[RMDB]
RNA sequence: GGGAACGACUCGAGUAGAGUCGAAAAUGUCUGCCAAUGUAUCCAGUUGUCCCGUCAGCCUGGAAGCUCUGAGGGAAAACCUUGGGCUGCUUCCUGAGCACCUGUAUCCCCUGCAGCCAGCCCGGGGUCACAGCGGAUAAUUCGUUAUCCGCUGUGAAAAAGAAACAACAACAACAAC
Reactivity to DMS in 0.01 (KOAc 150mM, MgCl2 10mM, bicine 150mM(pH8.5), 24C), signal-to-noise 2, nucleotides 027 to 126: u000g000u000c040u000g010c060c070a080a100u010g010u010a060u000c050c050a070g010u010u010g010u000c010c030c030g000u010c080a080g000c060c040u010g010g010a040a030g020c020u010c000u000g040a050g000g000g000a110a050a180a180c020c020u000u000g020g020g000c220u010g010c020u000u010c000c010u010g000a100g000c030a110c110c050u000g000u000a140u000c010c000c010c060u010g010c060a060g020c070c050a070g010c010c010c020g010g010g010g010